[RMDB]
RNA sequence: GGGAACGACUCGAGUAGAGUCGAAAAGAUAUGGACCGGGUAUGGAGCUACACUCGGAAACGAGUGAAUAGCGUUGAAAUACAUGGUCCUAAGUCAAAACAUCAUCAGGUCUUCGGACCUGAUGAUGGUUAACUGGCAUCUUCGGAUGCCAGUUAACAAAAGAAACAACAACAACAAC
Reactivity to DMS in 0.01 (KOAc 150mM, MgCl2 10mM, bicine 150mM(pH8.5), 24C), signal-to-noise 1, nucleotides 027 to 126: g000a000u000a060u030g000g000a000c000c010g030g040g040u000a010u000g010g000a020g030c000u000a110c000a020c000u000c000g010g000a020a010a000c000g030a010g000u010g000a130a210u000a010g030c000g000u010u000g010a200a130a020u010a010c000a070u020g020g020u000c000c010u000a000a070g000u010c000a110a110a120a300c030a000u000c000a000u000c000a000g000g000u010c000u010u010c230g010g010a010c010c000u000g000a000u000g000a000u000g000
Reactivity to 2A3 in 0.01 (KOAc 150mM, MgCl2 10mM, bicine 150mM(pH8.5), 24C), signal-to-noise 1, nucleotides 027 to 126: g000a020u030a010u080g020g000a000c030c010g190g130g110u030a010u010g050g030a010g000c000u020a020c010a000c000u000c000g000g030a000a030a000c010g010a000g000u040g060a200a190u060a000g000c000g040u050u130g010a010a000a020u010a000c060a060u260g030g000u010c000c000u000a010a000g000u020c010a000a030a110a170c010a010u000c000a010u000c000a010g000g040u000c010u080u280c300g200g000a000c000c030u020g000a010u010g000a010u000g020
Structure probing data (DMS and 2A3) for a 177-nucleotide construct. The data come from the RNA Mapping Database (RMDB), library TTRDES. 2A3 adducts were read by reverse transcription with SuperScript II with manganese. Values cover nucleotides 27 to 126.